[RMDB]
RNA sequence: GGGAACGACUCGAGUAGAGUCGAAAACGGGAAUCGCAGCACAAUCUCGUCUAUUGGCGUUAUGGCCAAUAUGCUGGCAUCGGGCCCGGCGCACAUGGCCGUUUCGUGGAAAAUGACGUGCGCACCACGCCAGCAUUAAUUUCGAUUAAUGCUGGCGAAAAGAAACAACAACAACAAC
Reactivity to DMS in 0.01 (KOAc 150mM, MgCl2 10mM, bicine 150mM(pH8.5), 24C), signal-to-noise 2, nucleotides 027 to 126: c040g020g010g030a090a070u000c070g000c070a060g030c030a110c150a130a080u020c070u000c110g000u010c080u000a110u010u000g000g000c000g050u000u010a070u000g030g020c000c010a010a020u000a010u000g020c000u000g000g020c060a100u000c110g000g000g000c050c030c040g010g010c000g010c020a030c030a250u010g000g030c070c000g010u000u000u000c030g000u030g010g010a060a020a020a010u000g000a040c060g000u000g000c000g010c020a130c030c050a110
Reactivity to 2A3 in 0.01 (KOAc 150mM, MgCl2 10mM, bicine 150mM(pH8.5), 24C), signal-to-noise 2, nucleotides 027 to 126: c020g020g000g020a050a090u090c040g000c060a020g030c000a060c040a130a080u040c040u020c120g060u000c070u040a070u040u050g020g000c020g060u200u100a110u170g130g010c010c000a000a000u100a050u040g020c010u020g040g000c020a070u140c080g060g040g000c010c010c000g000g000c020g000c010a080c010a080u090g040g000c000c000g020u060u070u050c150g050u250g090g090a130a030a000a050u050g000a010c040g010u000g040c020g000c010a020c010c070a040

This 177-nucleotide RNA was probed chemically with DMS and 2A3. For 2A3, 2,140 sequencing reads were counted. The reactions ran in a buffer of 150 mM KOAc, 10 mM MgCl2 and 150 mM bicine (pH 8.5), at 24 C. The data come from the RNA Mapping Database (RMDB), library OK2TST. The DMS profile rests on 2,106 reads.